[RMDB]
Annotation: Structure probing data (2A3 and DMS) for a 207-nucleotide construct. Source: RMDB library M2RFPK, as collected in RNAgym. The reactions ran in a buffer of 150 mM KOAc, 10 mM MgCl2 and 150 mM bicine (pH 8.5), at 24 C. 2A3 adducts were read by reverse transcription with SuperScript II with manganese.
RNA sequence: GGGAACGACUCGAGUAGAGUCGAAAAUCGAAAUCAUCGGGAGUAAUCCAGAUGACGGUCCUGCCAUGAGACCGCAACGAGAGCAUGUCGCAUCGAAUGGACUCGGGGAGUCGGCAGCUUGCCCCACUAAGGCAGACGUUGUUCGCAACGUCUGCAAGAUAGGGUAUUAGUUCGCUAAUACCCUAUCAAAAGAAACAACAACAACAAC
Reactivity to 2A3 in 0.01 (KOAc 150mM, MgCl2 10mM, bicine 150mM(pH8.5), 24C), signal-to-noise 7, nucleotides 027 to 156: u050c000g010a020a000a020u010c000a000u000c020g010g020g000a030g060u200a090a110u010c000c000a020g010a010u010g010a010c000g010g010u010c000c010u040g100c050c010a160u140g040a050g000a090c010c010g000c060a030a080c030g030a010g000a010g080c060a120u120g030u120c040g000c040a050u060c050g050a050a060u100g040g050a040c060u030c100g010g000g010g010a060g050u080c010g020g010c000a010g010c030u070u130g030c000c000c010c000a040c070u120a070a070g120g000c000a000g000a000c000g000u000u010g010u040u080c160g000c150a000a000c000g000u000c000u000g000c000a000a000
Reactivity to DMS in 0.01 (KOAc 150mM, MgCl2 10mM, bicine 150mM(pH8.5), 24C), signal-to-noise 2, nucleotides 027 to 156: u010c060g010a100a090a060u000c000a010u000c000g010g050g010a020g000u020a160a150u000c010c000a070g000a000u000g000a030c000g020g000u000c000c020u000g010c060c140a100u010g000a150g000a030c020c060g010c080a080a160c030g000a140g020a140g030c050a130u000g000u000c040g010c000a070u000c040g000a100a280u010g020g010a100c070u000c040g010g040g000g000a140g020u000c020g020g000c040a170g000c040u000u000g000c040c020c000c020a080c120u000a100a120g030g010c000a010g000a000c000g010u010u010g000u010u010c180g000c010a010a020c010g000u000c000u000g020c010a000a000